The record gives the reactivity of an RNA of 177 nucleotides to 2A3 and DMS.
For 2A3, 978 sequencing reads were counted.
The DMS profile rests on 713 reads.
For DMS the reverse transcriptase was MarathonRT.
2A3 adducts were read by reverse transcription with SuperScript II with manganese.
The reactions ran in a buffer of 150 mM KOAc, 10 mM MgCl2 and 150 mM bicine (pH 8.5), at 24 C.
[RMDB]
RNA sequence: GGGAACGACUCGAGUAGAGUCGAAAAAGAAAUAGCGAUAAUCGUAAGAGAAAUGUCCUUCACAUUGCGCUACGCACAGAACUAUUAGUAGCGCAAUAGCUAUUGAAGGACAUUACCUGCCAAAAAACAGAGCAAAUCAGUUCGCUGAUUUGCUCUGAAAAGAAACAACAACAACAAC
Reactivity to 2A3 in 0.01 (KOAc 150mM, MgCl2 10mM, bicine 150mM(pH8.5), 24C), signal-to-noise 2, nucleotides 027 to 126: a010g190a020a030a000u090a030g060c030g070a070u160a120a040u160c010g000u040a000a070g030a000g040a070a060a000u000g000u020c000c000u010u010c020a040c000a040u030u000g000c000g000c000u000a000c040g040c090a120c030a090g280a250a050c100u070a220u300u220a110g010u010a000g000c000g000c000a000a000u000a000g010c000u070a100u160u080g000a010a010g010g000a000c000a010u000u000a000c000c000u000g070c040c030a010a180a050a030a030a000
Reactivity to DMS in 0.01 (KOAc 150mM, MgCl2 10mM, bicine 150mM(pH8.5), 24C), signal-to-noise 1, nucleotides 027 to 126: a160g020a060a090a060u000a090g000c060g000a120u030a050a200u000c040g020u020a060a050g020a090g000a020a000a040u000g000u000c020c000u010u000c000a080c150a000u000u030g010c000g010c010u000a010c010g000c300a160c300a100g000a040a130c160u030a030u020u040a120g010u000a000g000c000g020c020a000a000u000a040g050c290u000a020u000u000g030a050a000g000g020a000c010a000u000u000a030c100c000u000g000c030c100a000a080a050a060a060a140